[RMDB]
RNA sequence: GGGAACGACUCGAGUAGAGUCGAAAAAGAUUCGACACGGCCGCCACUCGUGACGGAUUUCCGAGUGUCGAACAUGAGGAUCACCCAUGUCCGAGGACCGGGUGUUGAGAAAAUAAUAAAAUAAAAAGAACUUCAUACUGUUCGCAGUAUGAGGUUCAAAAGAAACAACAACAACAAC
Reactivity to DMS in 0.01 (KOAc 150mM, MgCl2 10mM, bicine 150mM(pH8.5), 24C), signal-to-noise 6, nucleotides 027 to 126: a080g010a150u000u000c000g000a050c000a020c030g000g000c040c000g000c090c020a060c040u030c170g020u020g020a020c100g000g000a150u000u040u020c040c020g020a140g000u000g010u000c050g010a020a080c050a090u010g000a200g000g000a100u030c120a090c030c020c020a070u050g010u010c000c010g020a130g020g000a110c220c240g000g010g020u010g020u000u000g000a120g000a120a080a050a070u010a020a070u040a070a050a030a100u030a050a070a070a100a110
Reactivity to 2A3 in 0.01 (KOAc 150mM, MgCl2 10mM, bicine 150mM(pH8.5), 24C), signal-to-noise 5, nucleotides 027 to 126: a000g070a130u030u010c000g000a000c010a000c000g040g000c010c000g000c010c010a040c020u060c060g110u140g020a020c020g020g010a070u110u040u050c010c010g030a070g020u010g030u060c050g010a050a010c000a020u070g030a060g020g050a030u040c020a080c030c000c010a060u160g000u000c000c010g030a060g000g060a020c020c000g010g000g000u020g000u030u060g030a050g020a000a070a010a010u080a010a020u120a030a060a020a010u280a030a060a020a000a030